[RMDB]
RNA sequence: GGGAACGACUCGAGUAGAGUCGAAAAGCUGAACGUGACGCCGCCGGCGCUGUCGAUGCGGCUGCGCAAGCUGGAGGCCGGCCUGGGCCUGGCGCUGGCGGUGCGCAGCGCGCGCCGUCUCAGCCUAAUCGUAAUGAUGCUUCGGCAUCAUUACGAUAAAAGAAACAACAACAACAAC
Reactivity to 2A3 in 0.01 (KOAc 150mM, MgCl2 10mM, bicine 150mM(pH8.5), 24C), signal-to-noise 1, nucleotides 027 to 126: g050c010u050g000a050a030c020g060u130g190a050c030g030c020c040g090c070c040g040g000c050g070c130u130g140u160c040g010a050u240g060c010g000g000c030u020g060c050g000c050a080a020g000c010u050g030g080a050g090g000c000c000g010g070c010c100u250g140g120g050c000c050u050g020g010c060g000c050u000g000g050c030g000g010u010g020c000g000c040a030g000c070g000c020g000c010g000c000c010g030u050c040u000c010a000g000c000c000u090a070
Reactivity to DMS in 0.01 (KOAc 150mM, MgCl2 10mM, bicine 150mM(pH8.5), 24C), signal-to-noise 2, nucleotides 027 to 126: g000c010u010g000a060a040c050g000u020g010a100c170g000c020c020g020c050c050g020g010c010g040c030u000g040u010c080g020a110u010g020c000g010g000c010u020g000c060g010c090a230a110g000c030u000g000g000a090g030g010c010c010g020g000c050c090u020g030g010g000c010c040u010g010g000c000g000c040u010g010g000c000g010g020u000g010c020g020c020a110g000c080g020c050g030c030g000c060c010g000u000c120u000c020a010g000c030c060u000a110
Structure probing data (2A3 and DMS) for a 177-nucleotide construct. DMS adducts were read by reverse transcription with MarathonRT. For 2A3, 1,803 sequencing reads were counted. Reactivities are given for positions 27 through 126.